[RMDB]
RNA sequence: GGGAACGACUCGAGUAGAGUCGAAAAAUGGGAUGCCAAAGCUGAUCGGCUUAGUUAAGGCAGCAACACUAAGUAGAAACAAACACUGCAUGUUGUGUACCGUCUGUGAGGACAGAGACUGGAGAGGCGAUAAGGACGCUUUCGAGCGUCCUUAUCGAAAAGAAACAACAACAACAAC
Reactivity to 2A3 in 0.01 (KOAc 150mM, MgCl2 10mM, bicine 150mM(pH8.5), 24C), signal-to-noise 2, nucleotides 027 to 126: a010u120g000g030g040a030u030g000c000c010a030a000a030g020c030u020g030a150u110c080g070g000c000u030u030a030g000u040u100a120a050g040g000c010a000g010c000a020a060c040a000c070u050a100a010g070u070a010g160a090a110a030c140a030a060a000c020a020c090u070g030c030a060u020g040u060u020g010u030g010u090a050c020c020g050u030c020u020g060u060g060a040g060g000a000c020a020g040a010g030a010c040u110g010g030a080g000a010g070g000
Reactivity to DMS in 0.01 (KOAc 150mM, MgCl2 10mM, bicine 150mM(pH8.5), 24C), signal-to-noise 4, nucleotides 027 to 126: a080u010g010g000g010a150u000g010c020c040a070a100a080g010c040u020g020a110u010c130g020g020c030u000u000a050g010u000u010a080a180g010g020c020a080g010c040a080a030c130a020c070u010a050a040g000u000a050g010a100a040a050c150a060a050a070c100a040c020u010g000c080a120u000g000u000u000g020u000g010u000a090c040c070g010u010c020u000g010u020g010a110g000g010a050c070a050g000a070g000a090c040u000g020g010a120g000a080g000g010